[RMDB]
RNA sequence: GGGAACGACUCGAGUAGAGUCGAAAAACAAGUUCGUGCGUGAGUCAGAUCUUGAGUAUUUCAGGAAAAAACGUCACAUUGGUGUCAUACUGGAAGGCGUCGAGUCUAAUGGGAGAGAAAUCACCCGAUCCUAUUGAGAGUUCGCUCUCAAUAGGAUAAAAGAAACAACAACAACAAC
Reactivity to 2A3 in 0.01 (KOAc 150mM, MgCl2 10mM, bicine 150mM(pH8.5), 24C), signal-to-noise 3, nucleotides 027 to 126: a010c040a050a020g060u070u070c040g050u060g080c020g010u060g040a050g100u040c040a020g020a160u010c000u060u070g030a030g050u090a260u070u180u040c020a010g040g000a030a100a000a020a020a020c080g040u070c030a020c030a090u040u180g090g000u020g030u050c030a050u050a170c030u020g030g030a050a010g030g000c000g020u020c040g020a010g020u020c010u100a110a120u130g010g040g000a060g000a010g030a040a070a030u030c030a030c010c020c020g010
Reactivity to DMS in 0.01 (KOAc 150mM, MgCl2 10mM, bicine 150mM(pH8.5), 24C), signal-to-noise 7, nucleotides 027 to 126: a070c080a080a100g010u000u000c050g020u010g010c060g040u000g010a140g020u000c070a070g000a190u010c010u010u000g010a050g010u010a090u010u010u010c010a040g010g000a000a050a070a100a060a060c120g010u000c030a030c060a190u000u000g010g010u000g000u000c030a100u000a100c040u000g000g010a050a030g010g010c040g000u000c040g000a060g000u000c020u000a070a080u010g000g010g020a130g000a030g000a050a040a120u000c040a090c010c000c010g000
Chemical mapping of a 177-nucleotide RNA with 2A3 and DMS.
As a SHAPE reagent, 2A3 marks flexible, mostly unpaired nucleotides at the ribose 2'-OH.
Values cover nucleotides 27 to 126.
Reactivities are rounded to 0.1 and cut off at 0 and 3.
For 2A3 the reverse transcriptase was SuperScript II with manganese.